[RMDB]
Notes
This 177-nucleotide RNA was probed chemically with 2A3 and DMS. For DMS the reverse transcriptase was MarathonRT. For 2A3 the reverse transcriptase was SuperScript II with manganese. The 2A3 profile rests on 363 reads.

RNA sequence: GGGAACGACUCGAGUAGAGUCGAAAAGGUGCAUCUUUGCGGAUGAUGAGUGUAAAUUAAAACAUCCAGAGCUACAGGGUUCUAAUCAUAUGUAUAGAUGCUCAAGAUACCCUAUGUGGAAGGACAAAUCCUGGAUCACGUUCGCGUGAUCCAGGAUAAAAGAAACAACAACAACAAC
Reactivity to 2A3 in 0.01 (KOAc 150mM, MgCl2 10mM, bicine 150mM(pH8.5), 24C), signal-to-noise 1, nucleotides 027 to 126: g220g000u000g000c000a000u010c000u000u100u100g050c050g050g000a000u000g000a000u060g000a010g070u000g000u070a080a130a200u280u300a140a160a000a000c010a010u110c300c140a060g010a050g110c000u230a190c090a050g160g000g000u010u000c020u050a130a000u000c000a060u080a060u070g000u000a010u000a140g040a000u000g000c000u000c000a070a100g040a100u170a140c000c000c000u090a120u120g040u100g060g010a100a200g070g000a000c040a050a210
Reactivity to DMS in 0.01 (KOAc 150mM, MgCl2 10mM, bicine 150mM(pH8.5), 24C), signal-to-noise 1, nucleotides 027 to 126: g000g000u050g000c000a000u010c010u000u000u070g070c080g060g000a000u000g000a030u000g000a120g010u000g020u000a070a080a090u050u050a040a130a150a020c060a000u000c130c090a000g030a010g000c000u000a170c300a220g090g000g050u000u000c000u000a150a000u000c000a000u000a020u050g000u000a160u030a000g000a010u000g000c020u050c070a000a020g000a170u000a060c100c130c000u000a000u090g050u000g020g010a100a260g060g000a070c130a030a060
The RNA was probed in 150 mM KOAc, 10 mM MgCl2 and 150 mM bicine (pH 8.5) at 24 C.